[RMDB]
RNA sequence: GGGAACGACUCGAGUAGAGUCGAAAACAGUUCCGAUGGAAAGGCUAAGCACCUCGCAAUGAGGUAAGGUGGGUGUUUCCUUCUGGAACCAAGCGGUUGGUUCCGAGGGGGGUGUGAUCCAGGUACCGCCGUAGAAACUGGAUUACGACGUCUACCCGCCUCACCUUGGGUUCGCCCAAGGUGAGGCAAAAGAAACAACAACAACAAC
Reactivity to 2A3 in 0.01 (KOAc 150mM, MgCl2 10mM, bicine 150mM(pH8.5), 24C), signal-to-noise 1, nucleotides 027 to 156: c040a000g100u050u050c030c010g010a140u260g000g080a040a020a020g020g000c040u100a030a060g080c010a000c000c020u040c040g060c250a230a300u300g000a010g000g020u060a000a070g060g000u050g000g010g000u030g050u010u120u060c000c000u030u050c110u050g010g000a000a000c000c000a020a000g060c000g150g000u020u010g000g000u000u000c000c000g010a030g010g000g000g000g030g000u130g000u010g020a000u000c000c000a010g000g000u020a010c030c020g090c010c050g000u010a090g010a140a230a000c000u000g000g020a000u010u000a010c050g020a000c030g020u050c010u010a100c000c000c020
An RNA of 207 nucleotides, treated with 2A3 and read out base by base.
For 2A3, 771 sequencing reads were counted.
It was measured as part of the RMDB library VIROID.